[RMDB]
RNA sequence: GGGAACGACUCGAGUAGAGUCGAAAAGAUCGGAUGGGAAGAGUAUAUCCUACGGGAAUCCCCCGGUCCCUCUCACGUCCAGCCCCUCCCCGUGUCUAGUGAAGGGAGACUCCGGGACUCCUUGCAUUAAGCUACCGCUUCGGCGGUAGCAAAAGAAACAACAACAACAAC
Reactivity to 2A3 in 0.01 (KOAc 150mM, MgCl2 10mM, bicine 150mM(pH8.5), 24C), signal-to-noise 2, nucleotides 027 to 129: g000a040u020c020g000g030a010u060g040g040g000a110a040g020a040g130u050a050u030a070u180c000c000u000a040c090g000g000g030a020a090u080c000c000c000c000c000g040g020u040c000c000c000u010c010u010c020a000c000g090u010c010c040a020g000c000c010c000c010u000c010c000c000c000g050u040g060u010c030u040a090g030u020g110a050a030g000g010g000a010g000a000c000u020c000c000g010g030g010a020c000u010c000c000u000u060g010c020a020u050u120a080a030
Reactivity to DMS in 0.01 (KOAc 150mM, MgCl2 10mM, bicine 150mM(pH8.5), 24C), signal-to-noise 3, nucleotides 027 to 129: g010a050u000c000g000g000a050u040g040g040g000a030a130g050a100g000u020a000u040a100u010c070c010u040a120c150g010g040g000a070a130u020c050c040c000c080c010g000g000u010c010c040c020u000c000u010c030a140c110g060u040c000c000a070g010c030c060c000c050u020c000c010c000c080g040u040g020u020c000u020a110g030u070g020a120a060g020g050g010a020g000a060c030u030c040c110g010g050g010a160c040u020c010c050u000u000g010c160a050u030u040a120a110
The record gives the reactivity of an RNA of 170 nucleotides to 2A3 and DMS. For 2A3 the reverse transcriptase was SuperScript II with manganese. Conditions: 150 mM KOAc, 10 mM MgCl2 and 150 mM bicine (pH 8.5), 24 C. Values are in units of 0.01, from 0 to 300, in steps of 10. Source: RMDB library 15KLIB, as collected in RNAgym. For 2A3, 4,488 sequencing reads were counted. Reactivities are given for positions 27 through 129. The DMS profile rests on 8,714 reads.